The data come from the RNA Mapping Database (RMDB), library PDB130. An RNA of 207 nucleotides, treated with 2A3 and read out base by base. The RNA was probed in 150 mM KOAc, 10 mM MgCl2 and 150 mM bicine (pH 8.5) at 24 C.
[RMDB]
RNA sequence: GGGAACGACUCGAGUAGAGUCGAAAAUCUGGUAAUGACGAGGCGACCCGUCGUACCUUAGCUAUCGCUAAGCUACGGGAGGCGAAUGGUGAUCGCGGUCAGAUAAAUAGAGAAGGUUUCUUACAUGACAAAUCCUUGUCAUGGGAUCCGGAUGUUUUCCAUCAGCUAAGUUCGCUUAGCUGAUGGAAAAAGAAACAACAACAACAAC
Reactivity to 2A3 in 0.01 (KOAc 150mM, MgCl2 10mM, bicine 150mM(pH8.5), 24C), signal-to-noise 1, nucleotides 027 to 156: u060c000u030g000g010u100a110a120u110g010a030c080g060a110g300g000c010g000a010c000c000c020g000u040c040g000u110a160c010c010u000u030a000g000c000u020a030u150c300g100c300u290a130a000g000c000u000a010c120g000g000g080a040g070g000c000g100a090a100u060g050g020u070g030a210u090c000g000c000g000g000u000c000a000g000a070u110a000a030a000u110a000g080a010g020a030a100g000g060u110u170u010c070u050u190a110c000a020u010g000a000c000a000a020a230u120c030c110u030u010g000u000c000a000u010g000g000g000a010u020c010c000g110g040a010u040g050u040u030u010